[RMDB]
This 177-nucleotide RNA was probed chemically with DMS. Source: RMDB library TTRINS, as collected in RNAgym. The RNA was probed in 150 mM KOAc, 10 mM MgCl2 and 150 mM bicine (pH 8.5) at 24 C.
RNA sequence: GGGAACGACUCGAGUAGAGUCGAAAAGAUAUGGAGCAUGAUCAUCCAGGAAGUUGGAAAUUGUUACUUUCUCGGAAACGAGAAAGUAACAAUUUCCAAUGGAAGGAUCGAUCGAUGCUCCUAAGUCCUCUUCCUACAACUUCGGUUGUAGGAAGAGAAAAGAAACAACAACAACAAC
Reactivity to DMS in 0.01 (KOAc 150mM, MgCl2 10mM, bicine 150mM(pH8.5), 24C), signal-to-noise 1, nucleotides 027 to 126: g000a120u010a300u000g000g000a040g030c010a040u000g000a050u000c000a020u000c000c010a080g050g030a300a280g010u000u000g000g000a020a010a000u000u010g010u000u020a000c010u000u000u000c000u020c020g010g000a060a060a190c000g000a010g000a010a000a010g020u000a000a000c000a020a000u000u000u000c000c000a000a000u000g000g050a300a190g020g000a020u000c180g000a000u010c000g010a040u000g040c000u000c000c000u000a020a110g000u000c020